The record gives the reactivity of an RNA of 207 nucleotides to 2A3. It was measured as part of the RMDB library M2RFPK. 2A3 adducts were read by reverse transcription with SuperScript II with manganese. Conditions: 150 mM KOAc, 10 mM MgCl2 and 150 mM bicine (pH 8.5), 24 C.
[RMDB]
RNA sequence: GGGAACGACUCGAGUAGAGUCGAAAACGGGGUUGGAUCCGACUCUCAUAGGCUCUCCAACCCAACUCCUACUCAAUACGUCCUCGUCGUACAGACCGGUAACAUGUUUUCCGAACAUCCGCGCUUGCAAACCUGCCAAAGUUCGCUUUGGCAGGAAGAUACUUCGUCUCUUCGGAGACGAAGUAUCAAAAGAAACAACAACAACAAC
Reactivity to 2A3 in 0.01 (KOAc 150mM, MgCl2 10mM, bicine 150mM(pH8.5), 24C), signal-to-noise 2, nucleotides 027 to 156: c080g060g010g020g000u000u010g040g000a100u300c000c050g090a150c080u110c020u000c110a070u200a180g000g000c000u020c000u000c000c000a010a000c000c000c000a000a040c000u000c000c000u020a020c010u010c030a030a100u060a140c030g090u020c020c000u040c020g020u050c030g000u060a050c080a050g080a140c000c000g000g000u060a080a080c030a080u060g010u020u030u000u070c080c060g000a020a000c010a040u060c010c020g050c010g020c090u090u080g040c030a000a080a150c010c000u000g000c000c030a000a000a000g010u040u110c180g070c090u010u000u000g000g000c000a000g000g010a000a000